RNA sequence: GGGAACGACUCGAGUAGAGUCGAAAACUCAACUGACAUACAAGGGGAGGUUUCGGCCAAAUGUUGUAUGCAGAAAGCGUGAGGAACGUAGCACUUAGACACUCACGAGUAGCGGUUCGGCAGUAGUAAAGGUCCUGGCGCUUCGGCGCCAGGACAACAUGUGGUUAUUGUUCGCAAUAACCACAUGAAAAGAAACAACAACAACAAC
Reactivity to DMS in 0.01 (KOAc 150mM, MgCl2 10mM, bicine 150mM(pH8.5), 24C), signal-to-noise 2, nucleotides 027 to 156: c010u000c010a080a130c000u000g000a120c030a090u000a070c040a070a060g000g020g020g020a300g020g020u000u000u000c140g050g000c010c010a040a110a170u000g010u000u000g000u000a050u000g030c010a060g020a060a100a090g010c030g030u000g020a090g020g020a060a100c060g000u000a070g030c040a100c060u000u000a190g010a140c040a110c010u000c030a100c020g020a100g030u000a100g000c020g000g010u000u000c020g020g000c020a090g010u000a090g000u010a020a110a180g020g000u000c000c000u000g020g020c000g040c010u000u010c250g050g000c000g000c000c010a000g020g000a000c000a010a020
Reactivity to 2A3 in 0.01 (KOAc 150mM, MgCl2 10mM, bicine 150mM(pH8.5), 24C), signal-to-noise 3, nucleotides 027 to 156: c030u030c020a020a090c030u020g070a110c000a010u050a010c010a030a020g070g030g000g010a050g030g030u020u060u130c200g140g000c020c010a020a040a040u130g010u050u000g010u010a030u020g000c000a010g040a080a110a000g060c020g000u010g020a030g010g150a100a040c080g030u080a030g060c040a050c080u130u150a010g040a050c030a000c020u010c010a000c030g020a020g020u040a030g040c060g000g100u090u070c050g070g000c060a050g020u140a010g010u050a080a140a100g090g000u000c000c010u000g000g000c000g000c000u040u050c200g060g000c000g010c000c000a000g000g000a000c000a000a000
This 207-nucleotide RNA was probed chemically with DMS and 2A3.
The RNA was probed in 150 mM KOAc, 10 mM MgCl2 and 150 mM bicine (pH 8.5) at 24 C.
DMS (dimethyl sulfate) methylates the pairing face of unpaired adenines and cytosines.
For 2A3, 2,370 sequencing reads were counted.
For 2A3 the reverse transcriptase was SuperScript II with manganese.